[RMDB]
Structure probing data (DMS and 2A3) for a 177-nucleotide construct. The DMS profile rests on 972 reads. It was measured as part of the RMDB library OK1LIB. The RNA was probed in 150 mM KOAc, 10 mM MgCl2 and 150 mM bicine (pH 8.5) at 24 C. Reactivities are given for positions 27 through 126.
RNA sequence: GGGAACGACUCGAGUAGAGUCGAAAACAUCUGGCUGGAGCCAUCAUCAGAGAAGACUGUUUAUUUGCAGAUCCGUAAUACCUCUGACAAGGACAUGUCUGGGCUGCAGGCACAAAUUACAAAUGAAUGCGUUCAUCUUUUUCGAAAGAUGAACGCAAAAAGAAACAACAACAACAAC
Reactivity to DMS in 0.01 (KOAc 150mM, MgCl2 10mM, bicine 150mM(pH8.5), 24C), signal-to-noise 1, nucleotides 027 to 126: c090a050u080c180u040g030g000c000u020g000g020a000g000c020c040a070u060c070a110u050c090a080g030a110g040a070a040g000a010c000u000g010u000u000u000a070u020u000u000g000c000a000g000a000u000c080c280g050u000a000a030u030a250c180c100u000c000u000g000a130c040a020a170g000g000a150c110a030u000g000u000c020u000g000g000g000c000u000g000c010a020g020g000c000a080c090a180a070a020u010u010a020c130a120a120a200u000g000a070a000
Reactivity to 2A3 in 0.01 (KOAc 150mM, MgCl2 10mM, bicine 150mM(pH8.5), 24C), signal-to-noise 1, nucleotides 027 to 126: c000a080u090c010u000g060g000c010u040g000g100a000g000c000c000a050u030c000a000u000c000a110g050a000g000a130a000g030a000c000u000g020u000u070u080a300u090u000u100g010c040a020g000a100u000c000c000g000u000a250a000u060a250c020c020u000c000u000g060a010c000a000a060g000g000a100c060a090u240g040u090c060u020g090g000g000c000u090g000c140a130g010g010c010a010c000a000a060a170u270u200a010c140a060a000a020u300g000a010a000